[RMDB]
Structure probing data (2A3 and DMS) for a 177-nucleotide construct. The data come from the RNA Mapping Database (RMDB), library OK1LIB. DMS adducts were read by reverse transcription with MarathonRT. Values cover nucleotides 27 to 126. Conditions: 150 mM KOAc, 10 mM MgCl2 and 150 mM bicine (pH 8.5), 24 C. For 2A3 the reverse transcriptase was SuperScript II with manganese.

RNA sequence: GGGAACGACUCGAGUAGAGUCGAAAAGAAGUUGGUGACAAAGUAUAGCCGUCCAACUCUGUUCACUAGGAAGAUGACAACACUAGCAAUCUUGACAUGCUUGGAAGACAAGUCACUGACAGAAGAGUCCGAGAGUUCUAUUCGUAGAACUCUCGGAAAAAGAAACAACAACAACAAC
Reactivity to 2A3 in 0.01 (KOAc 150mM, MgCl2 10mM, bicine 150mM(pH8.5), 24C), signal-to-noise 4, nucleotides 027 to 126: g120a030a020g020u000u000g000g000u010g000a010c010a030a210a050g050u060a110u090a150g150c090c020g030u000c000c010a030a070c030u020c040u080g100u110u160c050a030c130u030a000g080g070a210a040g060a250u270g050a110c040a050a020c020a110c100u030a040g000c040a070a160u080c120u150u050g000a040c010a040u020g100c060u010u000g000g070a050a030g030a020c030a090a000g000u040c020a010c030u050g000a000c000a010g110a090a010g050a040g100
Reactivity to DMS in 0.01 (KOAc 150mM, MgCl2 10mM, bicine 150mM(pH8.5), 24C), signal-to-noise 3, nucleotides 027 to 126: g010a100a100g000u000u000g000g020u000g000a020c020a080a140a160g030u020a090u040a160g000c040c030g060u010c010c070a000a050c110u020c090u000g000u000u030c080a100c090u000a030g010g000a090a090g000a120u000g000a060c180a080a100c250a100c060u000a000g060c180a040a030u020c050u040u010g000a050c020a100u010g000c210u000u030g030g010a020a080g010a050c050a040a210g010u000c010a020c040u000g000a040c020a060g000a110a090g000a100g020